[RMDB]
An RNA of 177 nucleotides, treated with 2A3 and DMS and read out base by base. 2A3 adducts were read by reverse transcription with SuperScript II with manganese. For 2A3, 2,492 sequencing reads were counted. DMS adducts were read by reverse transcription with MarathonRT. The reactions ran in a buffer of 150 mM KOAc, 10 mM MgCl2 and 150 mM bicine (pH 8.5), at 24 C.
RNA sequence: GGGAACGACUCGAGUAGAGUCGAAAAGAUAUGGAAGUAGCACGUUGAUGACCUGUUACAUUUUCGGAAACGAACCAUAACAGCAAGACGGCUACUUCCUAAGUCAAAACGUCCCUUCGGGGACGAAGUCUAGGGAUGUCUUCGGACAUCCCUAGACAAAAGAAACAACAACAACAAC
Reactivity to 2A3 in 0.01 (KOAc 150mM, MgCl2 10mM, bicine 150mM(pH8.5), 24C), signal-to-noise 2, nucleotides 027 to 126: g010a010u010a010u070g000g000a020a000g000u010a000g020c080a030c300g010u010u050g090a300u040g010a020c000c020u010g000u030u000a060c080a240u220u140u080u090c010g000g000a000a000a000c030g000a000a000c050c030a060u050a060a010c000a000g000c000a220a000g000a000c010g000g000c000u010a000c000u000u010c000c000u000a000a000g000u010c010a020a000a050a080c020g000u000c030c000c000u000u010c260g000g000g000g000a020c000g010a080a010
Reactivity to DMS in 0.01 (KOAc 150mM, MgCl2 10mM, bicine 150mM(pH8.5), 24C), signal-to-noise 1, nucleotides 027 to 126: g010a000u010a000u020g000g010a070a000g000u000a000g000c000a110c000g040u000u000g020a040u020g020a020c300c000u000g000u060u000a010c300a060u000u000u000u010c000g010g000a020a000a000c000g010a000a100c300c210a050u040a040a030c000a000g010c020a030a000g020a020c010g020g020c000u000a000c000u000u000c000c000u000a000a030g000u000c000a090a050a170a160c010g050u000c000c000c010u000u040c100g070g000g030g000a000c000g000a010a070

For DMS, 713 sequencing reads were counted.